[RMDB]
RNA sequence: GGGAACGACUCGAGUAGAGUCGAAAAAGGAUGUUCGCAUCCUGGUCUCACCUUUGUGACACUCAGUACUGGAGAUCCGAAACCUCCCAUUGGGAGGAGAUAGCUGAUCUAUGAAGGGAACCGUGUCACUCUGGUAUAACAACUGAUUCGUCAGUAAUUGAAUUUUGUAGUUCGCUACAAAAUUCAAAAAAGAAACAACAACAACAAC
Reactivity to 2A3 in 0.01 (KOAc 150mM, MgCl2 10mM, bicine 150mM(pH8.5), 24C), signal-to-noise 6, nucleotides 027 to 156: a000g020g000a020u030g010u110u170c250g030c150a000u000c000c000u010g010g050u000c010u000c010a020c000c000u000u000u010g010u000g000a000c010a000c000u000c010a000g010u000a000c010u020g030g020a010g000a010u010c030c010g020a110a060a060c010c000u000c000c020c070a300u150u300g000g010g000a010g060g000a020g070a070u140a030g040c130u050g010a000u000c010u020a300u170g010a000a010g040g010g000a000a000c010c000g000u010g000u000c000a000c000u000c000u000g000g000u040a100u150a240a060c100a020a030c010u000g010a030u060u100c160g090u050c110a010g060u170a150a220
Reactivity to DMS in 0.01 (KOAc 150mM, MgCl2 10mM, bicine 150mM(pH8.5), 24C), signal-to-noise 3, nucleotides 027 to 156: a020g010g030a040u000g020u000u010c230g000c010a000u010c000c000u000g000g000u000c020u000c040a090c030c030u000u020u000g010u000g030a060c020a030c020u010c020a110g010u000a180c040u000g000g020a000g010a010u000c020c030g000a100a210a250c010c000u000c000c000c010a300u010u040g020g010g030a030g020g010a000g010a190u000a120g020c170u000g010a040u000c010u000a160u000g010a300a300g010g010g000a160a140c150c300g020u000g000u000c000a020c010u010c000u000g000g000u000a060u010a080a150c060a110a110c030u000g000a060u000u010c210g040u000c010a020g010u000a100a250